Overview
Conditions: 150 mM KOAc, 10 mM MgCl2 and 150 mM bicine (pH 8.5), 24 C. An RNA of 177 nucleotides, treated with DMS and read out base by base. In probing experiments dimethyl sulfate is read out at A N1 and C N3, which are open when not base-paired. DMS adducts were read by reverse transcription with MarathonRT. Values cover nucleotides 27 to 126.
RNA sequence: GGGAACGACUCGAGUAGAGUCGAAAAUAAUUUAGAAGCAUAUAUGACGCCAAGACUUCAACCAUGGGAUUUUGCUGGCGGAUUGGUUAUUUUAUAUGAAGUAAAUGGACAAGCUUCAAAUUUACUAUAACGAAGGUAGUUUCGACUACCUUCGUUAAAAAGAAACAACAACAACAAC
Reactivity to DMS in 0.01 (KOAc 150mM, MgCl2 10mM, bicine 150mM(pH8.5), 24C), signal-to-noise 1, nucleotides 027 to 126: u000a020a010u030u000u000a130g010a010a030g000c000a060u000a140u030a130u000g010a200c140g030c020c020a050a110g000a090c030u000u000c000a050a090c080c050a150u010g000g010g000a140u000u000u010u010g010c060u010g000g020c030g040g000a100u000u010g000g020u010u000a040u030u000u000u010a130u040a120u030g010a030a100g010u010a000a060a050u000g000g010a040c040a180a100g000c000u000u020c060a010a030a010u000u000u000a030c070u000a150